[RMDB]
RNA sequence: GGGAACGACUCGAGUAGAGUCGAAAAAAUUAGCUGGGCGUGGUGGCACAUGUCUGUAAUCCCAGCUACUCAGGAGGCUGAGGCAGAUGAAUUGCCUGAACCUGGGAGGCGGAGGAUGCAGUCAGCCGAGAUCCUGCCAUUGCACUCCAGCCUGGGCAUUCCACAAUAGCUUCGGCUAUUGUGGAAUAAAAGAAACAACAACAACAAC
Reactivity to 2A3 in 0.01 (KOAc 150mM, MgCl2 10mM, bicine 150mM(pH8.5), 24C), signal-to-noise 1, nucleotides 027 to 156: a000a000u150u150a000g010c000u000g000g000g000c000g020u000g010g000u010g010g040c010a050c040a080u100g000u000c000u000g060u100a160a090u000c010c000c010a010g000c000u100a210c010u000c000a050g080g100a230g040g220c100u060g130a030g030g010c000a010g020a030u180g130a160a240u300u040g000c000c020u000g020a130a140c040c010u020g010g000g010a020g010g130c050g010g070a090g050g000a000u000g000c010a000g010u000c000a010g050c070c130g050a030g000a080u200c020c050u030g010c000c000a000u010u010g000c010a000c020u060c010c000a020g000c010c000u120g060g050g070c060